Chemical mapping of a 177-nucleotide RNA with DMS and 2A3. 2A3 adducts were read by reverse transcription with SuperScript II with manganese. DMS adducts were read by reverse transcription with MarathonRT. The 2A3 profile rests on 9,046 reads.

[RMDB]
RNA sequence: GGGAACGACUCGAGUAGAGUCGAAAAGAUAUGGAAUGAGUCUGGAGAGGCACUCGGAAACGAGUGGCCUCGUUGAAAGACCAUUCCUAAGUCAAAAGACCCCACAGCUGUUCGCAGCUGUGGGGUCCAAUGAUAACGAGUUCGCUCGUUAUCAUUGAAAAGAAACAACAACAACAAC
Reactivity to DMS in 0.01 (KOAc 150mM, MgCl2 10mM, bicine 150mM(pH8.5), 24C), signal-to-noise 5, nucleotides 027 to 126: g010a030u000a170u000g000g010a010a000u000g000a170g010u000c000u000g000g010a110g000a010g000g000c000a020c000u000c010g000g010a040a040a070c010g000a020g010u000g010g020c000c000u000c000g010u010u000g000a220a250a030g000a010c000c010a020u000u000c000c000u000a010a090g000u010c010a130a120a170a210g000a020c000c000c000c000a010c000a010g020c000u000g010u010u020c250g020c010a010g020c000u000g030u000g000g000g000g010u000c000
Reactivity to 2A3 in 0.01 (KOAc 150mM, MgCl2 10mM, bicine 150mM(pH8.5), 24C), signal-to-noise 3, nucleotides 027 to 126: g000a000u030a010u080g000g020a010a000u030g000a050g180u000c000u020g080g080a060g000a000g030g000c000a010c020u010c020g000g000a070a020a000c010g000a000g040u010g040g210c030c010u010c000g000u050u030g000a010a010a000g010a000c000c010a000u010u000c000c000u000a050a010g020u010c010a020a050a180a260g020a020c010c000c020c010a000c000a000g000c020u060g110u270u300c300g030c210a010g000c010u000g000u020g020g040g110g010u000c000
Values cover nucleotides 27 to 126. The RNA was probed in 150 mM KOAc, 10 mM MgCl2 and 150 mM bicine (pH 8.5) at 24 C.